An RNA of 177 nucleotides, treated with 2A3 and DMS and read out base by base. As a SHAPE reagent, 2A3 marks flexible, mostly unpaired nucleotides at the ribose 2'-OH. High DMS reactivity at an A or C suggests that its Watson-Crick edge is free. For 2A3, 933 sequencing reads were counted. Conditions: 150 mM KOAc, 10 mM MgCl2 and 150 mM bicine (pH 8.5), 24 C. The DMS profile rests on 8,233 reads. Source: RMDB library OK1LIB, as collected in RNAgym.
[RMDB]
RNA sequence: GGGAACGACUCGAGUAGAGUCGAAAAAUUGGCGACAAGGUCCGAUAGAUGACGCGAAUACUUAGGGGUUGAAACGCAGUCCUACACGGAGCACGUAGGAGGGUCAAUGAGAAUGAUCUGAAGACCCAAAAUAAUAUAUUUUCGAAUAUAUUAUUUUAAAAGAAACAACAACAACAAC
Reactivity to 2A3 in 0.01 (KOAc 150mM, MgCl2 10mM, bicine 150mM(pH8.5), 24C), signal-to-noise 2, nucleotides 027 to 126: a020u090u130g060g010c010g000a030c050a080a050g040g020u050c000c020g020a010u060a060g150a040u100g020a040c000g040c010g020a060a050u050a130c050u100u100a030g000g100g000g040u050u110g120a010a150a000c050g000c030a040g010u030c000c000u010a030c040a000c030g050g000a040g020c040a010c050g010u010a050g010g070a040g000g000g000u000c010a010a030u070g010a000g070a200a180u190g030a020u010c020u000g020a010a010g010a060c000c000c000
Reactivity to DMS in 0.01 (KOAc 150mM, MgCl2 10mM, bicine 150mM(pH8.5), 24C), signal-to-noise 5, nucleotides 027 to 126: a120u030u010g000g000c010g000a070c070a090a090g010g000u000c030c030g000a110u030a050g000a110u020g000a060c060g000c030g000a060a040u010a060c080u000u010a100g010g020g010g010u020u010g000a060a080a090c090g000c080a070g010u000c010c020u010a030c060a120c090g010g000a070g010c080a060c080g010u020a030g000g020a100g010g010g020u010c010a020a170u010g000a080g000a120a080u030g000a070u000c010u010g000a150a120g000a060c010c000c010